[RMDB]
RNA sequence: GGGAACGACUCGAGUAGAGUCGAAAAGAUUACGUGGCGUUGUGGAAUCGAUACUACGCACGAGAUUCCAAGGUCUCUGUAGUACGUCCGCUGGUGACGUCUUUGGAGUCACGUUCGAUAUACGAAAGCUAAGUACUAGGUUCGCCUAGUACUUAGCAAAAGAAACAACAACAACAAC
Reactivity to 2A3 in 0.01 (KOAc 150mM, MgCl2 10mM, bicine 150mM(pH8.5), 24C), signal-to-noise 5, nucleotides 027 to 126: g040a020u130u080a020c070g020u050g030g000c040g010u020u030g050u040g040g050a050a050u080c020g000a000u010a030c030u010a010c030g010c040a000c050g000a010g000a030u060u000c060c040a060a040g100g010u040c020u000c020u100g060u060a060g020u040a020c000g030u000c010c030g020c120u050g040g150u200g060a020c030g000u030c010u040u020u130g070g000a010g000u040c020a020c070g010u060u070c020g010a020u020a010u030a300c090g040a110a060a000
Reactivity to DMS in 0.01 (KOAc 150mM, MgCl2 10mM, bicine 150mM(pH8.5), 24C), signal-to-noise 4, nucleotides 027 to 126: g000a090u020u040a050c070g010u000g000g000c110g000u000u000g000u010g000g000a080a090u010c050g010a110u000a030c100u010a040c030g000c140a050c100g000a060g000a020u000u000c030c040a040a050g010g000u030c030u020c040u030g010u010a030g010u020a010c000g000u000c000c000g000c110u030g030g020u030g000a010c020g010u010c020u000u010u000g000g000a040g010u000c020a060c020g000u000u000c000g020a140u010a050u000a090c080g010a030a120a170